[RMDB]
RNA sequence: GGGAACGACUCGAGUAGAGUCGAAAAUAUUAGAUAUGGAAAAUAAAAUAUCGUUGCCAUCAAUACCAAUCCUACUAGAAUACUGCUGAAGAUUUUGCUGUGGAUUCGAAUAUACAGUAGAUACUGGCGAUAAUCCAACAAUUUUUCCUCCAUUUGGACUAUGCUAAUUUUUCGAAAUUAGCAUAGUAAAAGAAACAACAACAACAAC
Reactivity to 2A3 in 0.01 (KOAc 150mM, MgCl2 10mM, bicine 150mM(pH8.5), 24C), signal-to-noise 2, nucleotides 027 to 156: u030a020u080u190a090g070a100u120a130u150g030g020a080a110a070a090u150a070a120a160a000u100a010u060c050g020u050u060g030c010c010a050u060c070a030a070u060a120c040c020a010a040u090c010c010u010a080c000u070a010g060a050a020u020a140c020u030g160c030u020g040a120a060g040a300u120u020u090u200g010c020u020g010u000g020g000a000u020u030c020g030a060a000u120a030u060a210c050a080g040u040a000g030a030u130a080c030u020g040g000c010g020a020u030a020a030u000c020c010a020a030c040a070a070u110u030u020u050u010c000c040u010c010c000a090u070u050u150g040g010
Reactivity to DMS in 0.01 (KOAc 150mM, MgCl2 10mM, bicine 150mM(pH8.5), 24C), signal-to-noise 1, nucleotides 027 to 156: u000a060u010u050a140g000a140u020a070u000g010g020a150a070a090a200u000a050a150a090a100u000a040u000c040g030u000u000g000c030c020a050u020c070a100a120u000a060c070c010a090a080u000c040c050u000a040c000u000a080g000a120a140u010a100c040u010g000c000u000g010a080a090g020a150u000u010u000u000g000c020u010g050u010g030g000a130u010u000c070g000a100a100u000a200u010a110c050a070g070u000a120g030a150u000a050c060u010g010g010c070g040a080u010a070a090u000c030c030a070a030c010a030a040u000u000u020u010u010c020c040u040c040c010a100u000u000u020g020g010